Source: RMDB library OK2TST, as collected in RNAgym. The record gives the reactivity of an RNA of 177 nucleotides to 2A3 and DMS. DMS adducts were read by reverse transcription with MarathonRT. DMS (dimethyl sulfate) methylates the pairing face of unpaired adenines and cytosines. 2A3 adducts were read by reverse transcription with SuperScript II with manganese. The RNA was probed in 150 mM KOAc, 10 mM MgCl2 and 150 mM bicine (pH 8.5) at 24 C.

RNA sequence: GGGAACGACUCGAGUAGAGUCGAAAACUAUGAUGGCCGGGCUGGAAUGCUGUGGCUAUUCACAGGCACAAUCAUAGCUCACUGCAGCCUUGAGCUCCCAGGCUCAAGUGAUCCUCCCGCCUCAGCCGGUUCAUUAGUCAUUCGUGACUAAUGAACCAAAAGAAACAACAACAACAAC
Reactivity to 2A3 in 0.01 (KOAc 150mM, MgCl2 10mM, bicine 150mM(pH8.5), 24C), signal-to-noise 2, nucleotides 027 to 126: c020u050a090u160g040a050u110g020g060c180c060g040g060g000c200u040g010g030a100a090u050g000c020u020g020u020g030g030c020u000a030u030u150c100a080c050a120g180g000c070a060c030a130a110u140c040a040u020a020g000c030u100c040a020c020u020g000c020a020g030c010c010u000u020g010a010g020c010u060c040c050c010a040g060g000c000u000c010a000a020g010u030g110a040u020c010c010u000c000c010c000g010c000c000u020c010a030g060c060c070
Reactivity to DMS in 0.01 (KOAc 150mM, MgCl2 10mM, bicine 150mM(pH8.5), 24C), signal-to-noise 3, nucleotides 027 to 126: c060u010a070u000g000a030u010g030g010c110c040g000g020g000c100u000g010g020a080a140u000g010c000u000g030u000g010g000c010u000a020u000u010c160a110c110a090g020g030c100a080c170a070a090u000c210a020u010a020g000c010u000c010a020c010u000g000c050a070g020c110c000u000u000g000a020g000c030u000c020c050c070a190g000g000c000u010c010a030a020g010u010g000a160u000c040c020u000c000c000c020g010c000c020u000c040a080g030c220c060